[RMDB]
RNA sequence: GGGAACGACUCGAGUAGAGUCGAAAAACGUUGAUAUUGAUUUACUCCGAGGAGACGAACUACCACGAACAGGGCAAACUCUACCCGUGGCGUCUCCGUUUGACGAGUAAGUCCUAAGUCAACAUGCUAACAUGCGUGUUCGCACGCAUGAAAAGAAACAACAACAACAAC
Reactivity to DMS in 0.01 (KOAc 150mM, MgCl2 10mM, bicine 150mM(pH8.5), 24C), signal-to-noise 6, nucleotides 027 to 129: a030c140g000u000u000g000a000u020a070u000u010g030a030u000u000u000a000c010u010c020c040g030a080g020g010a020g010a030c020g020a040a030c150u130a300c120c020a040c080g010a080a180c130a170g000g000g000c290a020a060a090c070u030c000u000a130c160c030c020g060u010g020g030c090g000u030c000u010c000c000g000u040u020u050g030a120c300g030a000g020u030a020a030g020u040c030c100u060a000a110g020u020c010a000a000c000a110u070g030c070u000a060a140
Reactivity to 2A3 in 0.01 (KOAc 150mM, MgCl2 10mM, bicine 150mM(pH8.5), 24C), signal-to-noise 7, nucleotides 027 to 129: a000c100g000u000u000g000a000u040a060u070u080g010a010u010u000u000a000c000u000c010c010g040a040g000g000a000g050a000c010g010a060a060c100u160a070c110c000a000c010g060a110a040c060a090g020g020g040c140a110a050a220c050u040c020u070a040c000c020c020g000u000g000g000c000g000u000c000u000c000c000g000u040u040u050g020a030c030g000a000g000u000a000a000g000u000c000c000u050a080a040g000u000c000a000a000c010a010u120g020c020u100a090a030
This 170-nucleotide RNA was probed chemically with DMS and 2A3. Conditions: 150 mM KOAc, 10 mM MgCl2 and 150 mM bicine (pH 8.5), 24 C. The 2A3 profile rests on 24,062 reads. For DMS the reverse transcriptase was MarathonRT. It was measured as part of the RMDB library 15KLIB.